[RMDB]
RNA sequence: GGGAACGACUCGAGUAGAGUCGAAAAAUUGUUCUUCCAAUUGGUCAUGCUGAUGUACGAUUGAUUGACAUCUUUGUAUACAAAAUCCUUAAGCAAUUCCGGUUCUCAUUAUUGGGUGGGCACCAGAAGUUCUUGAUAUGUUCGCAUAUCAAGAACUAAAAGAAACAACAACAACAAC
Reactivity to 2A3 in 0.01 (KOAc 150mM, MgCl2 10mM, bicine 150mM(pH8.5), 24C), signal-to-noise 4, nucleotides 027 to 126: a010u100u100g020u060u010c030u100u010c020c000a050a060u080u060g060g020u070c020a050u060g030c030u120g070a090u080g030u050a070c050g050a110u040u160g050a050u020u110g040a060c010a050u020c030u030u100u100g080u040a130u010a070c050a010a110a020a110u040c010c040u110u150a070a020g030c020a040a130u100u010c030c010g020g000u040u000c030u010c020a060u020u170a110u190u100g120g000g030u020g020g000g000c030a020c030c010a020g050a080
Reactivity to DMS in 0.01 (KOAc 150mM, MgCl2 10mM, bicine 150mM(pH8.5), 24C), signal-to-noise 4, nucleotides 027 to 126: a090u000u000g010u000u000c100u000u000c050c030a100a180u000u000g010g010u010c070a050u000g020c040u000g010a090u010g010u000a060c080g010a090u000u000g000a090u010u000g010a100c070a060u000c060u010u000u000g010u020a080u020a080c100a050a040a080a070u000c020c030u000u010a150a090g030c100a040a120u000u000c030c020g020g010u010u000c010u010c020a060u000u000a110u000u000g000g000g030u000g000g010g000c040a030c030c030a050g010a100
Chemical mapping of a 177-nucleotide RNA with 2A3 and DMS. The DMS profile rests on 4,158 reads. Reactivities are given for positions 27 through 126. 2A3 adducts were read by reverse transcription with SuperScript II with manganese. For DMS the reverse transcriptase was MarathonRT. It was measured as part of the RMDB library OK2TRN.